[RMDB]
RNA sequence: GGGAACGACUCGAGUAGAGUCGAAAAAGUUCUAGUCCUCACCUAAGAUCAGACUGACACGGCCCUCAAAGCAAGAGCACUGGGUUGGGCUUUGUGGUGGGGAUCAGUGUCUCAUUUUUAGUCCCAAAUUAAAAACGAGAUUUUGGGCUGUACAUCAUAUUUAAUCGCAGUUCGCUGCGAUUAAAUAAAAAGAAACAACAACAACAAC
Reactivity to DMS in 0.01 (KOAc 150mM, MgCl2 10mM, bicine 150mM(pH8.5), 24C), signal-to-noise 2, nucleotides 027 to 156: a100g020u010u000c010u000a100g010u000c000c010u000c030a070c020c010u010a110a140g010a100u010c120a090g000a110c020u010g000a050c070a070c030g020g000c010c100c020u000c040a070a110a270g030c140a110a140g010a100g030c070a040c040u000g010g030g030u010u010g000g000g000c030u000u000u000g010u010g010g040u000g020g000g010g000a010u010c010a020g050u010g010u010c020u010c040a100u010u000u000u010u010a030g010u010c020c070c080a040a050a080u010u000a020a030a030a060a050c060g010a070g010a150u000u000u000u000g010g010g040c080u000g000u000a060c110a100u000c070a220
Reactivity to 2A3 in 0.01 (KOAc 150mM, MgCl2 10mM, bicine 150mM(pH8.5), 24C), signal-to-noise 1, nucleotides 027 to 156: a030g010u000u060c020u040a030g010u000c000c000u010c010a010c000c010u060a120a000g010a130u060c060a010g060a140c090u140g000a010c020a040c020g000g000c000c080c020u070c070a160a220a030g030c000a110a050g010a010g050c010a040c060u060g000g030g060u080u090g020g000g030c020u030u100u060g080u090g010g000u020g000g040g010g000a000u030c000a020g010u010g010u030c010u010c040a050u000u100u090u090u100a010g070u110c000c000c080a020a030a000u090u090a030a100a060a010a020c180g040a110g000a110u070u030u040u030g000g010g000c010u020g010u110a110c020a070u160c010a010